[RMDB]
RNA sequence: GGGAACGACUCGAGUAGAGUCGAAAAGAUAUGGAGUACAGCGGACCGAUAAGAAGCGGUCGGAAACGACCGGCUUCUUUUGACGGUCCCUGUACUCCUAAGUCAAACUGCUGCUUCGGCAGCAGAACAUUUAUAUGUGGUUCGCCACAUAUAAAUGAAAAGAAACAACAACAACAAC
Reactivity to DMS in 0.01 (KOAc 150mM, MgCl2 10mM, bicine 150mM(pH8.5), 24C), signal-to-noise 7, nucleotides 027 to 126: g000a030u010a300u010g000g000a010g020u000a000c000a010g020c230g040g010a010c000c000g020a200u010a020a010g010a020a010g020c000g000g000u000c000g010g000a070a070a150c000g010a010c000c010g050g030c000u000u000c000u010u000u000u010g010a170c160g010g010u000c000c000c000u000g010u000a000c010u000c000c000u000a000a050g010u000c020a130a150a270c010u000g000c000u000g010c010u000u020c240g030g010c010a010g010c000a000g000a100a210
Reactivity to 2A3 in 0.01 (KOAc 150mM, MgCl2 10mM, bicine 150mM(pH8.5), 24C), signal-to-noise 3, nucleotides 027 to 126: g020a010u050a020u100g000g000a010g000u000a000c010a000g060c180g140g020a000c020c090g150a080u090a300a010g010a010a000g010c010g010g000u000c010g000g000a080a030a010c020g000a010c020c050g100g030c010u010u000c040u020u030u030u050g050a020c070g000g000u010c000c000c010u000g000u000a000c000u000c000c000u000a000a000g000u000c000a020a020a060c000u010g000c000u010g000c000u030u050c280g180g000c020a010g000c000a010g000a000a000